[RMDB]
RNA sequence: GGGAACGACUCGAGUAGAGUCGAAAAGCUAGUCGGAGACGACUAGCAACGAUCAGUUCGCUGAUCGGAACGUGCAUUCAAGUACGCUAGAAGCACGAAUAGGCGACGCUUAGCGUAUAACUGAGAAAGCAGAUAACAAAAAUAAAAAGGCGUCGCGAGGCAUCAUAGGAUUCGUCCUAUGAUGCCUAAAAGAAACAACAACAACAAC
Reactivity to 2A3 in 0.01 (KOAc 150mM, MgCl2 10mM, bicine 150mM(pH8.5), 24C), signal-to-noise 2, nucleotides 027 to 156: g000c000u000a000g000u000c000g040g000a020g020a210c020g000a000c000u000a000g050c000a000a010c000g000a000u000c000a000g040u050u080c150g000c060u000g000a000u040c040g000g000a010a030c010g000u000g000c090a300u010u000c020a020a030g070u040a000c010g020c010u010a010g010a010a010g000c000a000c000g020a060a120u190a210g080g000c000g000a000c000g000c000u030u130a040g000c000g080u000a010u050a040a020c030u040g010a040g140a300a130a060g110c010a000g110a060u210a180a040c120a020a080a020a090a070u260a050a090a010a000a030g000g030c000g000u000c000g000c000g010
Overview:
This 207-nucleotide RNA was probed chemically with 2A3. The reactions ran in a buffer of 150 mM KOAc, 10 mM MgCl2 and 150 mM bicine (pH 8.5), at 24 C.